RNA sequence: GGGAACGACUCGAGUAGAGUCGAAAAACAACUUCUCAGAGCUGCACUGCUGCCACCCUAGUUAAAGCUACCAUCAACUCUUUCUCCUAGACUGUUCCAGGGCCUUGCAACUAGCCUUGUGCUGUAGAGCUAGAAGUAAAUUCGUUUACUUCUAGCUAAAAGAAACAACAACAACAAC
Reactivity to DMS in 0.01 (KOAc 150mM, MgCl2 10mM, bicine 150mM(pH8.5), 24C), signal-to-noise 9, nucleotides 027 to 126: a060c070a060a080c090u000u000c020u010c030a140g000a110g010c050u000g010c060a070c060u000g010c050u000g000c040c040a070c040c030c020u000a060g010u000u000a050a070a100g000c040u000a070c060c030a070u010c060a050a080c070u000c030u000u000u000c040u000c010c050u000a090g010a090c070u000g000u000u000c080c020a070g000g000g010c050c030u000u000g010c080a050a060c090u000a080g010c020c030u000u010g020u000g010c030u000g010u000a090g010
Reactivity to 2A3 in 0.01 (KOAc 150mM, MgCl2 10mM, bicine 150mM(pH8.5), 24C), signal-to-noise 8, nucleotides 027 to 126: a000c020a030a030c020u080u020c020u010c020a050g020a030g040c050u060g000c030a020c050u040g010c020u030g010c010c010a050c010c010c010u030a040g030u050u120a110a080a010g010c020u030a060c020c010a040u070c020a030a080c020u010c010u050u080u020c040u020c020c010u040a060g030a150c040u050g040u110u000c020c010a020g030g020g000c020c030u020u070g030c010a050a040c040u040a020g000c010c000u060u090g070u090g020c020u040g050u110a060g010

Structure probing data (DMS and 2A3) for a 177-nucleotide construct.
It was measured as part of the RMDB library OK2TST.
DMS adducts were read by reverse transcription with MarathonRT.
For 2A3 the reverse transcriptase was SuperScript II with manganese.
The reactions ran in a buffer of 150 mM KOAc, 10 mM MgCl2 and 150 mM bicine (pH 8.5), at 24 C.
Reactivities are rounded to 0.1 and cut off at 0 and 3.